[RMDB]
RNA sequence: GGGAACGACUCGAGUAGAGUCGAAAAUCUCAAAGCUUCGGCUUUGAGACAGUAAGGGAAACCGAUAAUUCCGGUCGACUCCGGAGAAACAAAGUCAAAUAAGAACGUUAGGCUUCGGCCUAACGAAUCACGCAUGUAGAUUCGUCUACAUGCGUGAAAAAGAAACAACAACAACAAC
Reactivity to DMS in 0.01 (KOAc 150mM, MgCl2 10mM, bicine 150mM(pH8.5), 24C), signal-to-noise 2, nucleotides 027 to 126: u000c000u000c000a000a000a000g010c020u000u000c230g020g030c000u010u000u000g000a020g000a020c050a170g020u000a090a100g030g010g000a060a120a190c020c050g010a190u000a100a180u010u000c000c000g000g000u000c010g010a050c000u030c000c000g010g000a030g010a050a000a230c080a000a020a020g000u010c020a140a050a100u010a100a100g040a090a220c020g020u000u000a020g000g010c010u000u000c210g020g010c000c000u000a000a000c010g000a080a040
Reactivity to 2A3 in 0.01 (KOAc 150mM, MgCl2 10mM, bicine 150mM(pH8.5), 24C), signal-to-noise 3, nucleotides 027 to 126: u030c000u000c000a000a000a000g000c010u050u140c180g090g000c000u000u010u010g000a010g000a000c020a030g080u140a100a130g050g010g020a060a040a060c020c020g010a050u090a180a130u250u000c010c060g000g000u000c000g000a010c060u050c300c000g010g000a030g100a030a010a000c000a000a000a000g030u080c090a020a030a090u150a050a050g070a130a020c000g000u000u010a010g010g020c020u010u030c270g060g000c000c000u000a000a000c000g000a000a010